This 207-nucleotide RNA was probed chemically with 2A3 and DMS.
The 2A3 profile rests on 1,104 reads.
The reactions ran in a buffer of 150 mM KOAc, 10 mM MgCl2 and 150 mM bicine (pH 8.5), at 24 C.
Source: RMDB library OK3TST, as collected in RNAgym.

[RMDB]
RNA sequence: GGGAACGACUCGAGUAGAGUCGAAAAGAAAGAGCCUGAAUACGGAGAACCGUAACGCAUGACCGAAUAUUCAGCCCAGUUCACGACGUAAGUCGUGCGCCCGAGUCUGGGUCUGGGCGCUGGGGUCACGUACAUGCGUCAGGCAGGACUCAGAGAAUACUCCUAAAUAGUUCGCUAUUUAGGAGUAAAAAGAAACAACAACAACAAC
Reactivity to 2A3 in 0.01 (KOAc 150mM, MgCl2 10mM, bicine 150mM(pH8.5), 24C), signal-to-noise 2, nucleotides 027 to 156: g060a010a070a010g080a020g000c020c000u040g070a110a070u070a040c020g000g010a150g090a300a180c020c000g010u010a040a000c000g000c020a000u020g030a050c060c040g090a160a070u160a120u300u200c040a050g050c000c000c000a010g050u120u170c030a000c010g010a000c030g040u130a100a140g010u020c020g000u030g010c010g020c010c000c000g010a020g150u000c020u050g010g000g000u000c000u000g010g000g000c000g000c000u000g020g000g010g050u130c060a020c110g020u040a080c000a010u000g000c000g020u030c000a020g010g020c010a000g050g030a010c000u000c010a000g020a010g020a080a010
Reactivity to DMS in 0.01 (KOAc 150mM, MgCl2 10mM, bicine 150mM(pH8.5), 24C), signal-to-noise 2, nucleotides 027 to 156: g020a060a120a090g000a170g000c000c010u010g010a080a170u000a050c030g000g010a170g010a100a200c030c010g030u010a060a230c010g020c000a020u000g010a140c060c040g000a090a160u000a140u000u000c030a190g030c000c010c000a030g000u010u020c010a050c010g030a010c000g020u000a200a220g000u000c000g010u000g010c150g020c000c010c000g010a090g000u000c040u020g020g030g050u010c010u000g020g010g000c010g010c010u000g010g010g030g000u010c060a050c100g010u000a120c020a040u000g000c030g020u000c000a030g000g050c000a100g030g000a070c020u000c000a080g000a210g020a160a280